Structure probing data (2A3 and DMS) for a 170-nucleotide construct.
[RMDB]
RNA sequence: GGGAACGACUCGAGUAGAGUCGAAAAUCCGAGGGGCCCAACCACCAAGUUUGGAGAGCACUCCGGGCCGAAUGGUCGAGUAGCACUCAGAGGGAGGAAUCCACACGGAGUAGAGCAGAGAAAUCACAACCAUACCCCUUCGGGGGUAUGAAAAGAAACAACAACAACAAC
Reactivity to 2A3 in 0.01 (KOAc 150mM, MgCl2 10mM, bicine 150mM(pH8.5), 24C), signal-to-noise 8, nucleotides 027 to 129: u000c020c000g000a060g010g020g020g010c000c010c030a010a040c020c030a040c020c030a100a030g030u030u070u090g070g000a040g000a030g030c040a030c060u000c030c010g010g010g000c010c000g040a100a140u250g010g010u010c020g000a000g010u080a020g020c040a030c030u000c040a020g040a080g060g020g000a020g000g010a020a030u010c040c000a040c010a010c090g010g020a030g020u100a040g000a010g020c050a000g040a000g030a090a080a030u130c050a030c040a090a030c070
Reactivity to DMS in 0.01 (KOAc 150mM, MgCl2 10mM, bicine 150mM(pH8.5), 24C), signal-to-noise 6, nucleotides 027 to 129: u010c020c000g020a100g020g000g000g030c080c030c000a140a100c060c050a100c080c060a100a080g030u050u030u040g010g030a040g030a120g000c120a040c050u020c030c120g010g030g040c020c010g010a060a050u110g010g020u000c030g000a050g040u020a100g050c070a150c000u040c030a040g020a050g060g000g000a010g000g000a070a090u020c030c020a060c020a130c060g020g020a000g020u030a040g000a060g000c060a070g000a070g020a090a070a060u060c090a040c130a100a110c110
DMS (dimethyl sulfate) methylates the pairing face of unpaired adenines and cytosines. The reactions ran in a buffer of 150 mM KOAc, 10 mM MgCl2 and 150 mM bicine (pH 8.5), at 24 C. For DMS, 35,796 sequencing reads were counted. It was measured as part of the RMDB library 15KLIB.